[RMDB]
RNA sequence: GGGAACGACUCGAGUAGAGUCGAAAAAUUAGCCAAGAAUUUAUUAACAGUGUCUUCUGCAUCUUUCCUGUGGCUGACAUGACCCAUCUCAACCCAUUUUCCUUCUGUGUCUCUGUGUGGACAGCUCGCCUUUAAUGAAUUUCGAUUCAUUAAAGGCAAAAGAAACAACAACAACAAC
Reactivity to 2A3 in 0.01 (KOAc 150mM, MgCl2 10mM, bicine 150mM(pH8.5), 24C), signal-to-noise 6, nucleotides 027 to 126: a000u060u050a000g050c010c010a040a020g040a090a100u190u270u180a100u200u250a140a040c040a070g050u010g060u070c030u070u020c020u090g010c000a050u020c040u060u070u070c010c000u060g010u040g090g000c020u020g010a010c010a050u090g050a070c000c010c010a080u030c040u010c030a050a080c010c010c030a050u070u050u070u060c020c000u040u080c060u100g100u020g020u050c000u020c020u040g160u030g040u080g080g030a020c010a020g040c030u040c050
Reactivity to DMS in 0.01 (KOAc 150mM, MgCl2 10mM, bicine 150mM(pH8.5), 24C), signal-to-noise 6, nucleotides 027 to 126: a110u010u000a070g010c030c020a090a110g010a110a060u010u010u010a070u020u010a100a110c090a090g010u000g010u010c050u000u000c050u000g010c060a050u000c050u000u000u000c030c030u000g030u010g000g010c040u000g000a070c080a060u000g000a110c040c010c030a090u000c030u010c060a060a120c040c030c020a130u020u000u000u010c040c010u000u000c060u000g010u000g010u000c030u000c040u010g010u000g020u000g010g010a060c090a060g010c170u000c140

This 177-nucleotide RNA was probed chemically with 2A3 and DMS. The RNA was probed in 150 mM KOAc, 10 mM MgCl2 and 150 mM bicine (pH 8.5) at 24 C. For 2A3 the reverse transcriptase was SuperScript II with manganese. For DMS, 7,910 sequencing reads were counted.